[RMDB]
RNA sequence: GGGAACGACUCGAGUAGAGUCGAAAAAACAGCUGCACGUACGUACGAGCAGUUUUCGAAAUAAACCUACGUACGAAAUAAAUAAAUUCUACUCGAUGCGAAACAAAGCAAAGUCGUUCCCAGGGAACUAGAUUGUAUAGUUCGCUAUACAAUCUAGAAAAGAAACAACAACAACAAC
Reactivity to 2A3 in 0.01 (KOAc 150mM, MgCl2 10mM, bicine 150mM(pH8.5), 24C), signal-to-noise 7, nucleotides 027 to 126: a000a000c110a040g070c060u160g010c060a010c090g000u040a000c010g020u040a020c060g030a060g080c080a010g030u010u000u030u060c060g090a120a040a050u160a050a080a030c000c030u030a030c030g010u020a010c020g040a060a050a030u150a030a070a010u120a030a040a010u050u010c000u010a000c000u000c010g030a040u070g010c010g040a150a130a100c080a070a080a000g020c020a070a070a030g000u000c000g000u000u010c000c000c000a000g000g020g000a040a030
Reactivity to DMS in 0.01 (KOAc 150mM, MgCl2 10mM, bicine 150mM(pH8.5), 24C), signal-to-noise 4, nucleotides 027 to 126: a100a100c150a110g020c150u000g020c080a200c000g010u000a020c070g010u010a040c160g030a110g010c140a070g020u000u000u000u000c100g020a090a110a060u020a040a060a060c070c040u000a010c020g010u000a030c010g010a110a130a080u000a030a080a060u000a090a060a030u000u000c000u010a000c000u000c000g020a210u000g010c020g010a080a100a110c250a070a100a150g000c010a100a190a020g010u000c000g010u000u000c000c000c000a030g010g000g000a150a130

Chemical mapping of a 177-nucleotide RNA with 2A3 and DMS. For 2A3 the reverse transcriptase was SuperScript II with manganese. DMS adducts were read by reverse transcription with MarathonRT. For 2A3, 11,991 sequencing reads were counted. Conditions: 150 mM KOAc, 10 mM MgCl2 and 150 mM bicine (pH 8.5), 24 C. It was measured as part of the RMDB library M2PK90.